[RMDB]
RNA sequence: GGGAACGACUCGAGUAGAGUCGAAAACGCUACGAAUUUAAAGAGAAAUUAGUUUAGGAAGAAAAAAAUUAUCUAUCUACAUCAUCGUCUAUUGGAUAACGUCUCUGUAUUCUACGAUAGAGUGCUACUUUAAGAUGCGACAGAUCUGUGUCAUCAACAAACUCAGUGAUUUCGAUCACUGAGUUUGAAAAGAAACAACAACAACAAC
Reactivity to 2A3 in 0.01 (KOAc 150mM, MgCl2 10mM, bicine 150mM(pH8.5), 24C), signal-to-noise 2, nucleotides 027 to 156: c010g010c110u090a020c030g100a140a110u080u130u180a130a150a020g060a020g030a040a070a100u050u050a050g010u010u090u130a030g020g010a040a040g000a070a120a040a060a010a000a080u150u100a050u040c020u020a040u000c010u090a060c020a020u080c000a010u030c010g060u000c020u100a150u070u150g030g000a010u050a050a020c020g100u000c050u010c000u080g000u040a060u090u000c030u030a010c080g030a030u050a070g020a010g030u030g010c000u010a070c030u040u030u040a040a010g010a020u040g040c020g040a010c080a060g020a050u000c030u090g060u030g020u080c000a050u080c000a000a100
Reactivity to DMS in 0.01 (KOAc 150mM, MgCl2 10mM, bicine 150mM(pH8.5), 24C), signal-to-noise 2, nucleotides 027 to 156: c010g010c060u000a070c000g010a120a090u000u000u000a060a030a200g000a220g020a100a180a170u000u000a100g000u000u000u010a060g040g010a120a140g030a000a000a100a180a050a070a120u000u000a040u010c030u000a070u010c000u000a050c070a040u010c040a080u000c020g000u010c030u000a120u020u000g020g000a120u010a020a060c050g000u000c060u000c050u000g010u000a060u000u010c060u000a040c040g000a090u010a050g000a040g020u010g050c040u000a090c100u030u000u000a080a110g020a070u000g020c100g000a090c030a050g020a060u010c090u010g020u000g000u010c060a120u000c020a040a160